[RMDB]
Overview: The record gives the reactivity of an RNA of 207 nucleotides to DMS and 2A3. For 2A3, 766 sequencing reads were counted.
RNA sequence: GGGAACGACUCGAGUAGAGUCGAAAAUCUGCUGUGUAAUAUCAAUAAUUGACAAAAGUCAGCCAUUGUUAUAGUCAGUAGUCACACCAGCAGUCUUCUGAGUGCUUAUCAGAGAAGUGAAGUUAGGUGGUGGGUUUGAGAAGGAUUUGAUUACACAGAUUAUACGGGCAUUCGUGCCCGUAUAAUCAAAAGAAACAACAACAACAAC
Reactivity to DMS in 0.01 (KOAc 150mM, MgCl2 10mM, bicine 150mM(pH8.5), 24C), signal-to-noise 1, nucleotides 027 to 156: u010c020u000g040c010u000g020u010g030u000a170a130u010a120u000c010a060a080u000a010a090u020u060g010a060c000a070a080a140a230g000u000c000a020g020c010c050a070u010u000g020u000u000a060u000a160g000u000c000a070g000u000a040g000u010c090a080c030a040c040c010a040g020c010a070g010u000c090u010u000c010u000g050a110g020u000g010c090u010u000a060u010c060a100g010a110g000a070a100g000u000g010a070a080g010u010u010a090g020g030u000g000g030u010g020g040g010u000u000u000g020a090g000a070a080g010g000a050u000u000u000g010a110u000u000a080c050a060c030a150
Reactivity to 2A3 in 0.01 (KOAc 150mM, MgCl2 10mM, bicine 150mM(pH8.5), 24C), signal-to-noise 2, nucleotides 027 to 156: u010c000u040g010c040u000g020u010g080u120a060a090u050a060u120c060a000a060u080a120a060u120u100g000a030c030a040a300a010a080g020u060c000a030g050c020c000a050u020u060g040u070u070a050u040a110g130u070c060a040g050u050a010g080u110c050a000c010a010c050c010a000g010c010a020g010u020c010u090u010c020u060g050a060g060u130g060c040u110u090a070u150c020a030g040a000g000a160a030g050u050g070a060a000g020u010u070a050g070g030u050g030g030u050g000g120g000u070u100u180g070a070g000a020a040g010g030a030u050u000u160g000a020u010u100a020c040a000c030a050
Values cover nucleotides 27 to 156. For DMS the reverse transcriptase was MarathonRT. It was measured as part of the RMDB library OK3TST. For 2A3 the reverse transcriptase was SuperScript II with manganese.